[RMDB]
RNA sequence: GGGAACGACUCGAGUAGAGUCGAAAAGAUAUGGACCGUUCGGGAGCCUCAUUCUCGGAAACGAGAAGAGGCGAAGAACGAGACGGUCCUAAGUCAAAAGAAAUUCAGUGUUCGCACUGAAUUUCAAGCAAAAGAUAUCGUUCGCGAUAUCUUUUGCAAAAGAAACAACAACAACAAC
Reactivity to 2A3 in 0.01 (KOAc 150mM, MgCl2 10mM, bicine 150mM(pH8.5), 24C), signal-to-noise 1, nucleotides 027 to 126: g010a000u020a020u040g000g000a000c000c000g030u020u010c020g040g080g000a030g010c010c000u030c070a300u010u020c010u020c000g000g020a050a010a010c010g010a010g030a020a000g000a010g010g030c000g000a020a000g020a000a000c020g010a030g030a020c020g040g000u000c000c000u000a000a000g000u000c020a010a060a150a120g010a010a020a000u000u020c000a010g010u000g130u130u180c300g090c100a010c000u000g000a000a000u010u010u000c010a020a000
Reactivity to DMS in 0.01 (KOAc 150mM, MgCl2 10mM, bicine 150mM(pH8.5), 24C), signal-to-noise 2, nucleotides 027 to 126: g010a050u020a090u000g000g000a000c000c000g010u010u000c020g000g000g000a060g010c000c020u000c010a160u010u000c000u000c000g000g000a010a040a060c000g010a000g000a010a030g000a010g000g010c020g010a060a070g010a090a210c020g000a050g000a040c000g030g000u020c000c000u010a000a080g000u020c010a090a080a130a080g000a000a000a000u000u000c000a010g010u000g010u000u020c250g020c000a000c000u000g000a000a010u000u000u000c000a060a180
This 177-nucleotide RNA was probed chemically with 2A3 and DMS. High DMS reactivity at an A or C suggests that its Watson-Crick edge is free. Values cover nucleotides 27 to 126. The data come from the RNA Mapping Database (RMDB), library TTRDEL. 2A3 adducts were read by reverse transcription with SuperScript II with manganese. The RNA was probed in 150 mM KOAc, 10 mM MgCl2 and 150 mM bicine (pH 8.5) at 24 C. The 2A3 profile rests on 2,516 reads.